Structure probing data (2A3 and DMS) for a 177-nucleotide construct. The RNA was probed in 150 mM KOAc, 10 mM MgCl2 and 150 mM bicine (pH 8.5) at 24 C.
RNA sequence: GGGAACGACUCGAGUAGAGUCGAAAAUAUUUCAGAGCCAGUAAGACCUCGGCGGCAUAAAAUUUGGCCCUUCUUACAGAUAGUCUUUGGUUUUGAACAUGCCACAUUAAGUCACCGCCCCCAAUAAAGCCCUGAUUAAUUUCGAUUAAUCAGGGCUAAAAGAAACAACAACAACAAC
Reactivity to 2A3 in 0.01 (KOAc 150mM, MgCl2 10mM, bicine 150mM(pH8.5), 24C), signal-to-noise 1, nucleotides 027 to 126: u140a060u000u100u030c010a010g020a000g000c000c000a030g080u060a000a090g000a000c000c000u040c120g020g000c070g010g000c090a040u300a070a090a050a090u170u100u120g070g010c000c000c000u050u010c040u040u070a090c050a000g030a170u110a000g030u030c030u020u080u030g040g060u000u030u000u020g030a020a080c030a060u220g070c000c010a050c000a030u120u180a080a000g020u020c000a000c010c010g010c000c020c020c000c070a020a030u010a060a200
Reactivity to DMS in 0.01 (KOAc 150mM, MgCl2 10mM, bicine 150mM(pH8.5), 24C), signal-to-noise 1, nucleotides 027 to 126: u020a040u000u000u080c030a090g000a080g010c020c000a080g040u030a050a060g030a110c030c160u000c230g000g030c090g000g000c010a060u000a000a100a090a120u020u000u000g040g010c080c030c090u000u000c150u020u000a040c100a140g000a080u010a060g010u080c030u010u020u000g000g000u010u000u000u010g000a090a020c200a120u000g030c040c000a020c190a020u040u000a050a110g010u010c070a120c020c010g000c000c020c000c000c020a050a060u000a030a100